[RMDB]
RNA sequence: GGGAACGACUCGAGUAGAGUCGAAAAUGCGUAUAAAAUGAUAACCACCUAAUGUGCGCACGCUAAGGGCGCGAUCGACGCCUAAACCACCGCUCGAACGUAUAAUUGCGCAACCAACAUCAGUGCCGCAACUCGCAUCGCAAUUAUAAAGGUUAAAAAAAGCUAAGAUCUUCGGAUCUUAGCUUUUAAAAGAAACAACAACAACAAC
Reactivity to 2A3 in 0.01 (KOAc 150mM, MgCl2 10mM, bicine 150mM(pH8.5), 24C), signal-to-noise 2, nucleotides 027 to 156: u070g000c000g020u060a020u040a160a100a080a070u090g000a040u080a130a060c040c020a090c050c060u110a060a160u120g010u020g000c010g000c000a040c020g060c030u060a050a080g010g000g010c000g000c030g030a040u100c030g140a130c010g000c000c000u010a070a000a000c030c030a030c000c040g000c010u050c030g030a120a080c040g030u040a060u010a040a020u060u030g010c010g040c050a020a040c050c000a040a080c000a060u120c090a020g030u010g060c030c030g040c060a050a080c090u030c030g000c000a010u000c000g000c040a030a000u010u010a020u010a040a070a020g060g000u100u060a040a020a050
Reactivity to DMS in 0.01 (KOAc 150mM, MgCl2 10mM, bicine 150mM(pH8.5), 24C), signal-to-noise 1, nucleotides 027 to 156: u000g010c030g000u010a050u000a060a080a140a050u000g040a180u020a060a060c030c030a100c020c040u000a070a150u040g050u000g030c020g000c040a080c050g060c020u010a080a280g040g000g060c000g000c000g040a120u000c050g020a130c040g000c000c010u000a060a130a160c110c010a050c090c000g000c000u000c040g000a080a080c060g060u010a020u000a010a060u000u000g000c040g000c070a080a080c060c020a070a160c040a090u000c060a050g040u000g000c020c030g000c070a130a080c060u000c070g020c050a110u010c060g010c000a040a030u000u000a040u000a030a090a080g010g000u000u030a000a020a100